Notes
The record gives the reactivity of an RNA of 207 nucleotides to DMS and 2A3. For 2A3, 393 sequencing reads were counted. Source: RMDB library M2RFPK, as collected in RNAgym. Conditions: 150 mM KOAc, 10 mM MgCl2 and 150 mM bicine (pH 8.5), 24 C.

[RMDB]
RNA sequence: GGGAACGACUCGAGUAGAGUCGAAAAGUAUUCAUUCUCCUUUCUCGAUAGAGAUUGGAGUCAUACAACCCCAGAAACCAUUCCUUAUACCUUGAGUAUUGCUGAAUUAAGUUUAGCGUGCAUGCUCUUAAUGGGUGCACCUUCGGGUGCACCCAAACGUUUUUGUUAAGUUCGCUUAACAAAAACGAAAAGAAACAACAACAACAAC
Reactivity to DMS in 0.01 (KOAc 150mM, MgCl2 10mM, bicine 150mM(pH8.5), 24C), signal-to-noise 1, nucleotides 027 to 156: g000u000a020u010u010c040a180u010u010c010u010c010c010u010u000u000c000u000c000g020a300u010a150g010a000g010a050u000u000g000g010a010g000u010c250a040u000a000c010a050a280c050c010c010c120a130g000a110a140a080c050c030a240u000u000c040c050u010u020a120u000a080c060c010u000u010g010a070g000u000a040u000u030g040c070u000g010a050a070u000u000a080a130g000u040u000u000a070g010c060g050u000g020c060a060u010g030c010u010c010u000u000a090a130u010g010g060g060u050g000c040a040c040c000u020u000c300g040g030g130u000g060c070a000c000c000c020a000a020a060
Reactivity to 2A3 in 0.01 (KOAc 150mM, MgCl2 10mM, bicine 150mM(pH8.5), 24C), signal-to-noise 1, nucleotides 027 to 156: g030u030a060u060u090c100a060u200u030c030u000c010c000u000u000u000c020u030c010g210a300u190a300g000a020g000a000u000u000g000g000a000g000u010c000a000u030a030c020a010a100c000c020c000c070a050g150a050a040a020c110c030a080u130u220c030c020u100u170a080u130a300c020c030u100u100g040a010g010u030a060u130u090g000c000u010g020a130a230u130u080a120a030g140u080u050u040a030g030c020g010u030g010c040a000u010g020c000u010c020u050u120a120a050u080g000g070g000u000g010c000a000c040c020u030u110c240g080g000g050u020g100c010a000c030c020c000a000a000a000